[RMDB]
RNA sequence: GGGAACGACUCGAGUAGAGUCGAAAAGGUGGUCUGGGGUCUGACGGUGGGGUCGUGGAUAGGUUCGUCGGCGGGUCUGAUGGUGGCGGCGGCCUCGCCGUAUGUGGCGUGGAUGAGCGUCACCGCGCAUGCACGAACCAUUCGUGGUUCGUGCAUGAAAAGAAACAACAACAACAAC
Reactivity to DMS in 0.01 (KOAc 150mM, MgCl2 10mM, bicine 150mM(pH8.5), 24C), signal-to-noise 1, nucleotides 027 to 126: g000g000u000g000g000u010c060u010g000g000g000g010u010c090u000g000a070c060g010g020u010g000g000g000g000u000c050g030u010g020g020a120u000a070g010g000u000u000c070g010u000c050g030g010c050g000g010g000u010c050u000g010a110u010g000g030u000g010g000c030g010g010c020g020g000c000c000u000c010g020c020c010g000u000a020u010g020u020g000g020c020g010u000g000g010a080u010g000a110g010c020g010u000c030a030c020c040g000c170g010
Reactivity to 2A3 in 0.01 (KOAc 150mM, MgCl2 10mM, bicine 150mM(pH8.5), 24C), signal-to-noise 1, nucleotides 027 to 126: g040g020u080g000g050u040c120u060g040g000g010g020u040c070u070g040a050c030g000g050u050g000g010g020g090u030c010g020u020g020g030a080u080a130g130g010u080u120c020g010u020c010g020g010c010g070g030g060u000c020u090g120a150u120g030g060u020g010g000c040g040g020c000g010g000c010c000u000c040g000c000c000g020u060a120u070g080u080g010g010c000g000u030g040g040a110u110g040a040g100c020g010u000c000a020c020c010g010c000g000
An RNA of 177 nucleotides, treated with DMS and 2A3 and read out base by base. DMS adducts were read by reverse transcription with MarathonRT. For 2A3 the reverse transcriptase was SuperScript II with manganese. For DMS, 4,680 sequencing reads were counted. Conditions: 150 mM KOAc, 10 mM MgCl2 and 150 mM bicine (pH 8.5), 24 C. Reactivities are rounded to 0.1 and cut off at 0 and 3.